[RMDB]
RNA sequence: GGGAACGACUCGAGUAGAGUCGAAAACCAAGAUUCCAUAACUCACUACCCAGCUCUUAAGAUGGUUCAAACACAUCUUAGCCACUAUGUUCUUAACAUAGAUUGGUUGUGGUUUGCAUUUGAGACUCACGGCAUCCGUUCGCGGAUGCCAAAAGAAACAACAACAACAAC
Reactivity to DMS in 0.01 (KOAc 150mM, MgCl2 10mM, bicine 150mM(pH8.5), 24C), signal-to-noise 1, nucleotides 027 to 129: c060c000a180a140g000a100u030u010c020c050a000u050a020a030c070u050c030a090c050u030a130c050c020c040a130g000c050u010c070u020u000a130a050g030a040u080g000g030u000u000c180a040a050a050c210a080c010a030u040c060u000u000a090g000c050c020a080c000u040a010u040g010u030u050c160u000u000a020a060c020a000u000a010g000a070u000u040g020g040u000u040g000u000g000g060u000u030u050g010c100a150u040u000u000g030a110g000a080c040u020c080a060c110
Reactivity to 2A3 in 0.01 (KOAc 150mM, MgCl2 10mM, bicine 150mM(pH8.5), 24C), signal-to-noise 4, nucleotides 027 to 129: c000c000a000a000g100a110u060u030c000c000a040u030a060a060c020u010c070a010c010u050a080c020c000c000a000g030c020u050c020u110u020a010a010g020a010u010g020g000u100u130c050a060a090a000c120a010c000a120u000c000u020u060a000g010c000c000a000c000u000a000u030g030u110u010c160u200u190a040a000c000a000u010a000g020a070u030u070g010g000u010u030g010u050g010g010u100u020u010g040c040a120u030u000u080g030a030g000a010c030u050c060a020c070